This 207-nucleotide RNA was probed chemically with DMS and 2A3. Conditions: 150 mM KOAc, 10 mM MgCl2 and 150 mM bicine (pH 8.5), 24 C. The 2A3 profile rests on 536 reads. 2A3 adducts were read by reverse transcription with SuperScript II with manganese. Source: RMDB library RNAMAK, as collected in RNAgym.
[RMDB]
RNA sequence: GGGAACGACUCGAGUAGAGUCGAAAACCAUAGCUAUUCGUAGCUAUGGAUCGCGAUAUGGACCCUAAGCGAUAAGUCUGAUCACUCGGAAACGAGUGCGUAGACUUUUGACGCGAAGGGUCCUAAGUCUACAGAAGUGUCCUUUCGAGGACACUAACUUGUGUGAUCCAUUCGUGGAUCACACAAGAAAAGAAACAACAACAACAAC
Reactivity to DMS in 0.01 (KOAc 150mM, MgCl2 10mM, bicine 150mM(pH8.5), 24C), signal-to-noise 1, nucleotides 027 to 156: c000c000a010u000a000g000c010u000a000u000u010c170g010u010a010g020c000u000a000u010g000g000a030u010c030g000c020g000a160u020a180u000g050g000a030c000c020c000u000a090a300g010c010g000a110u000a040a030g010u010c000u030g000a100u000c000a010c010u000c000g000g010a300a070a250c010g040a050g060u020g000c140g000u020a040g010a050c000u000u000u000u010g000a300c030g000c000g000a260a080g020g000g000u010c000c010u000a000a100g010u000c040u000a300c110a110g000a110a110g000u030g010u000c000c000u000u000u000c240g020a050g040g000a000c000a000c010u000a020a020
Reactivity to 2A3 in 0.01 (KOAc 150mM, MgCl2 10mM, bicine 150mM(pH8.5), 24C), signal-to-noise 1, nucleotides 027 to 156: c010c000a000u000a010g000c000u000a000u100u220c120g230u100a010g000c040u010a000u000g000g010a110u210c150g000c020g060a000u010a060u030g010g030a030c000c000c000u060a050a000g000c000g120a080u060a260a000g000u000c010u010g000a010u300c000a000c000u000c000g050g020a120a100a000c020g000a000g000u000g000c000g000u070a000g000a010c010u060u030u060u040g180a080c000g020c020g010a010a010g000g120g000u000c000c000u000a000a000g000u120c050u120a040c040a150g300a300a000g260u040g000u010c010c000u150u090u130c300g060a030g030g000a000c000a000c040u050a040a030